[RMDB]
RNA sequence: GGGAACGACUCGAGUAGAGUCGAAAACGAGUGCGAUAAAGACGCGGUUGCCGAUCGGUAUGGAUGCCACCGUGACGGCUCAAUCACACAAGUGCCAACGAUAACGAGGCGCUCGCUAUUGCUGCGUAAAAGCGACGAUCGUUCGCGAUCGUCGCAACCCACUUUACAACUUCGGUUGUAAAGUGGGAAAAGAAACAACAACAACAAC
Reactivity to 2A3 in 0.01 (KOAc 150mM, MgCl2 10mM, bicine 150mM(pH8.5), 24C), signal-to-noise 1, nucleotides 027 to 156: c040g020a020g000u000g070c000g000a080u040a070a100a010g070a000c010g040c010g000g040u000u050g000c010c030g040a030u070c020g040g090u100a150u200g110g010a100u110g010c020c040a050c010c000g050u020g100a040c000g030g010c020u000c010a040a040u050c010a010c020a030c010a090a090g030u010g000c010c020a080a050c090g140a150u140a160a070c030g010a100g130g010c020g010c000u000c010g000c000u110a130u280u260g020c080u040g020c010g050u040a000a000a140a100g060c020g000a000c000g010a000u000c010g020u120u040c130g000c000g070a000u000c000g000u020c010g000c010a000a000